RNA sequence: GGGAACGACUCGAGUAGAGUCGAAAAGCAUAAUAGCUACGGCUAUUAUGCAACCGGAGGAUCUACGGAUCCUCCGGAAGGCGCUGUGUCGCAAUCUGCGAAGGGCGUCGUCGGCCCAAGCGGUAGUAAGCAGGGAACUCACCUCCAAUGAAACACAUUGUCGUAGCAGUUGACUACUGUUAUGUGAUUGGUAGAGGCUAAGUGACGGUAUUGGCGUAAGCCAAUACCGCAGCACAGCACAAGCCCGCUUGCGAGAUUACAGCGCUAGCGUCGGCUUCGGCCGACGCAAAAGAAACAACAACAACAAC
Reactivity to 2A3 in 0.01 (KOAc 150mM, MgCl2 10mM, bicine 150mM(pH8.5), 24C), signal-to-noise 2, nucleotides 027 to 266: g020c000a000u000a000a000u000a020g000c000u000a020c230g090g010c000u000a000u000u000a000u000g000c000a020a010c000c010g000g020a000g000g000a000u000c010u030a100c300g110g000a000u000c000c010u000c000c010g000g010a010a060g020g000c000g020c000u000g000u000g000u040c000g000c070a090a060u060c050u170g000c020g030a060a030g000g000g000c000g000u000c000g010u000c000g040g000c000c010c010a090a050g010c040g070g000u040a040g010u010a060a000g000c050a050g030g030g000a150a190c020u010c010a000c000c010u050c000c000a020a000u060g050a140a250a070c080a010c000a140u030u000g000u040c000g010u000a010g000c000a000g040u060u020g040a030c030u110a000c000u300g000u000u000a000u010g040u010g020a070u050u060g000g050u060a210g020a020g030g000c000u050a300a090g010u000g010a020c000g000g020u000a000u010u000g020g000c080g060u140a170a080g000c000c000a000a000u000a000c000c000g060c000a000g020c000a010c010a000g010c000a020c000a060a010g010c000c000c010g000c000u000u000g000c020g000a010g000a010u150u260a020c010a000g000c000g000c000u000a020
Reactivity to DMS in 0.01 (KOAc 150mM, MgCl2 10mM, bicine 150mM(pH8.5), 24C), signal-to-noise 1, nucleotides 027 to 266: g010c010a000u000a010a020u010a010g020c000u010a120c300g030g000c000u000a010u000u000a000u010g000c010a100a030c010c000g060g000a010g020g010a030u000c000u000a060c160g050g010a030u000c000c000u000c000c010g000g030a040a090g010g000c000g040c000u000g010u010g020u000c010g000c180a230a120u040c200u000g000c030g000a000a040g010g000g000c010g000u000c000g000u000c020g000g000c020c010c000a030a170g010c000g020g020u020a220g010u020a020a020g010c000a080g010g000g000a010a300c000u000c020a030c060c030u000c010c000a010a000u000g000a170a250a220c300a130c000a030u000u000g000u010c020g010u000a000g010c010a000g000u000u020g010a030c000u010a010c020u000g000u000u000a000u000g000u000g040a000u010u010g000g000u000a140g000a010g000g010c010u020a020a070g010u000g010a030c000g020g030u000a010u000u000g000g010c000g010u040a130a250g020c040c020a020a020u000a000c000c010g020c000a010g000c060a020c000a040g020c000a080c160a000a000g000c000c010c020g040c020u000u000g000c000g000a070g040a030u000u000a050c020a030g010c000g000c020u020a000